Structure probing data (2A3) for a 207-nucleotide construct. The reactions ran in a buffer of 150 mM KOAc, 10 mM MgCl2 and 150 mM bicine (pH 8.5), at 24 C. The data come from the RNA Mapping Database (RMDB), library OK3TST.
RNA sequence: GGGAACGACUCGAGUAGAGUCGAAAAAUUGAAUCAUCAAGCAAUCAACCCUUACGGCAAAUUCAGUUUUUCGUUUUGCUUGCCUUGGUUGCCUGUUAUCAAUUAGGUGUUCCUAGCACAUUGGAACAGAUUUUCAAGCAAAGAAAUGUCCUGCCCAGAAAAUGGGGAUGUUCGCAUCCCCAUUUUCAAAAGAAACAACAACAACAAC
Reactivity to 2A3 in 0.01 (KOAc 150mM, MgCl2 10mM, bicine 150mM(pH8.5), 24C), signal-to-noise 2, nucleotides 027 to 156: a000u000u020g040a030a040u040c070a030u030c040a180a070g050c010a030a030u060c010a000a140c170c040c040u070u200a120c090g050g020c000a000a050a080u080u040c050a130g100u030u000u010u030u270c040g010u030u020u060u030g060c060u030u040g000c000c040u040u020g010g000u010u010g000c000c000u000g000u070u010a140u140c020a060a030u060u030a160g100g000u010g000u050u070c020c030u050a050g080c080a050c000a090u030u090g030g000a000a000c000a020g090a090u050u020u000u050c060a100a060g060c070a120a110a040g050a030a140a060u050g000u000c050c000u060g000c000c020c000a000